Structure probing data (2A3 and DMS) for a 207-nucleotide construct. For DMS, 2,768 sequencing reads were counted.

RNA sequence: GGGAACGACUCGAGUAGAGUCGAAAAGGGUUUGAGCCAUCGCCCGAAUACGAUGGGUGAUACAAGUCGCCAUUGUACGCGACGUAGUACGUACUCAUUAGUGCGAAAGCACGGUUAGUCCGACUCGGCAGGGACGAUCUUCUGUCAAUACUUAGAAACCCUAGUGGUGAUUCGUCACCACUAGGGUAAAAGAAACAACAACAACAAC
Reactivity to 2A3 in 0.01 (KOAc 150mM, MgCl2 10mM, bicine 150mM(pH8.5), 24C), signal-to-noise 3, nucleotides 027 to 156: g110g000g040u100u110u170g060a010g060c020c030a020u000c000g050c010c000c020g050a080a050u100a050c050g010a010u050g000g040g050u060g030a010u050a170c080a090a130g000u010c000g000c000c010a070u050u260g050u070a050c080g010c000g000a010c030g010u010a020g000u000a110c070g010u000a030c010u000c000a050u030u080a110g000u010g010c000g010a130a020a010g010c010a000c000g010g000u020u020a000g010u000c020c000g020a030c050u020c000g020g000c020a010g030g000g060a040c030g070a130u000c030u120u020c020u020g050u000c010a030a110u080a150c070u130u120a090g070a140a150
Reactivity to DMS in 0.01 (KOAc 150mM, MgCl2 10mM, bicine 150mM(pH8.5), 24C), signal-to-noise 2, nucleotides 027 to 156: g000g000g000u000u000u000g020a150g030c000c070a060u000c030g010c010c010c010g000a120a050u000a050c030g000a040u000g000g060g070u020g020a070u010a050c100a040a110g010u020c000g040c000c030a130u000u000g060u000a150c060g000c020g060a040c030g010u000a170g050u020a020c000g000u000a060c010u060c030a050u000u000a080g020u000g030c000g000a200a090a220g010c010a020c000g010g050u000u000a100g010u000c010c030g020a060c060u000c020g040g030c040a060g000g020g020a110c070g020a090u010c040u000u030c020u000g000u000c030a060a080u000a170c090u000u010a130g010a120a180